[RMDB]
RNA sequence: GGGAACGACUCGAGUAGAGUCGAAAAGAUAUGGAUUGUGGGAGGAAGGUAUCGGAAACGAUACUCUUCCUUUGAUCACACGGUCCUAAGUCAAACUCGGAACGUCUGUUCGCAGACGUUCCGAGAAGAAUCGUAUGUUCUUCGGAACAUACGAUUCAAAAGAAACAACAACAACAAC
Reactivity to DMS in 0.01 (KOAc 150mM, MgCl2 10mM, bicine 150mM(pH8.5), 24C), signal-to-noise 3, nucleotides 027 to 126: g010a040u010a300u000g000g000a020u000u000g010u000g010g020g010a020g010g010a020a010g000g020u000a000u000c000g000g000a090a060a210c010g000a010u000a010c000u010c000u000u000c000c000u000u000u000g020a130u010c150a190c000a020c030g020g010u000c000c010u010a060a150g010u000c010a100a140a220c000u000c000g000g000a020a010c000g010u000c000u010g030u000u020c250g000c000a000g000a010c000g000u000u000c000c000g000a010g000a040a060
Reactivity to 2A3 in 0.01 (KOAc 150mM, MgCl2 10mM, bicine 150mM(pH8.5), 24C), signal-to-noise 2, nucleotides 027 to 126: g000a030u060a040u130g020g010a010u020u000g010u000g010g020g010a020g000g000a010a010g010g000u010a000u030c000g020g060a090a050a050c050g010a000u020a010c040u080c010u050u010c000c000u000u000u030g020a010u010c020a000c000a000c080g040g000u070c000c010u000a090a020g040u040c090a110a020a060c000u000c000g000g000a000a000c010g010u020c000u010g110u150u150c300g000c150a010g000a020c020g020u010u000c000c000g000a000g000a000a000
Source: RMDB library TTRDEL, as collected in RNAgym. An RNA of 177 nucleotides, treated with DMS and 2A3 and read out base by base. DMS (dimethyl sulfate) methylates the pairing face of unpaired adenines and cytosines. Values cover nucleotides 27 to 126. For 2A3 the reverse transcriptase was SuperScript II with manganese. For 2A3, 4,253 sequencing reads were counted.